An RNA of 177 nucleotides, treated with 2A3 and DMS and read out base by base.
For 2A3, 3,868 sequencing reads were counted.
The reactions ran in a buffer of 150 mM KOAc, 10 mM MgCl2 and 150 mM bicine (pH 8.5), at 24 C.
[RMDB]
RNA sequence: GGGAACGACUCGAGUAGAGUCGAAAAUACGUCCGACAAGACGACCAAAACACCCCGUGUCUCGCUGUGCCUUCGGGUGCCGAGCACUCCCUCCCUCCGCCGGGUCUGAAAGAACGAUUUUCGGCUGCAUAAGACAAUCGUUCGCGAUUGUCUUAUGAAAAGAAACAACAACAACAAC
Reactivity to 2A3 in 0.01 (KOAc 150mM, MgCl2 10mM, bicine 150mM(pH8.5), 24C), signal-to-noise 2, nucleotides 027 to 126: u130a010c010g000u020c020c020g050a070c060a040a030g010a000c020g040a070c020c110a040a050a030a030c040a090c010c020c000c030g010u000g020u040c020u000c010g070c120u090g020u030g020c010c000u070u060c170g090g000g010u000g000c000c000g010a000g010c010a010c030u040c000c010c010u010c000c000c000u020c010c000g000c010c010g010g020g000u010c000u020g030a020a050a010g110a070a010c080g010a010u090u020u070u100c000g010g020c010u030g000
Reactivity to DMS in 0.01 (KOAc 150mM, MgCl2 10mM, bicine 150mM(pH8.5), 24C), signal-to-noise 4, nucleotides 027 to 126: u000a120c050g030u010c010c040g000a220c300a120a150g010a050c030g010a150c060c040a060a060a100a100c210a190c080c030c040c130g020u010g000u010c010u000c020g020c160u000g040u000g010c000c010u000u010c140g040g010g020u000g020c020c010g000a010g020c010a030c010u000c020c000c000u000c020c000c010u000c050c060g030c020c020g010g000g010u000c010u000g030a070a140a110g020a070a080c130g000a040u000u000u010u010c000g010g010c020u000g020